[RMDB]
RNA sequence: GGGAACGACUCGAGUAGAGUCGAAAAUCACCACCACGGCGUGGUCAGACCGCGGGUUGCCGGCACUGUCGGUUUCCUCGACGGGCUGGCCCCAGAUCAUCUCGGCGUUGAUGCUGACGAUCACGGCCGUUGAUAAGGUAUUCGUACCUUAUCAACGAAAAGAAACAACAACAACAAC
Reactivity to 2A3 in 0.01 (KOAc 150mM, MgCl2 10mM, bicine 150mM(pH8.5), 24C), signal-to-noise 8, nucleotides 027 to 126: u060c020a050c060c010a020c030c040a070c090g100g000c060g070u100g000g010u010c000a010g020a040c010c010g020c060g030g000g000u040u130g000c000c000g000g000c050a100c300u220g010u020c000g010g000u020u120u060c010c040u160c070g130a170c010g010g010g000c000u000g000g010c000c000c000c000a020g010a050u050c010a030u020c030u020c060g040g000c040g080u080u200g100a130u280g010c010u010g010a030c060g010a010u020c030a020c070g130g000c030
Reactivity to DMS in 0.01 (KOAc 150mM, MgCl2 10mM, bicine 150mM(pH8.5), 24C), signal-to-noise 9, nucleotides 027 to 126: u010c080a160c030c030a180c150c130a110c120g000g000c040g020u000g020g010u000c010a060g000a030c020c010g010c080g000g000g010u000u000g020c000c000g010g000c010a140c110u010g010u000c000g010g000u000u010u010c120c060u000c010g010a110c010g010g010g000c000u000g000g000c010c000c040c040a080g000a040u000c040a110u010c140u000c030g010g010c020g020u010u010g010a140u010g010c010u000g010a050c220g000a020u000c030a100c060g000g010c050
This 177-nucleotide RNA was probed chemically with 2A3 and DMS. The RNA was probed in 150 mM KOAc, 10 mM MgCl2 and 150 mM bicine (pH 8.5) at 24 C. Source: RMDB library OK2TRN, as collected in RNAgym. For 2A3 the reverse transcriptase was SuperScript II with manganese. DMS adducts were read by reverse transcription with MarathonRT.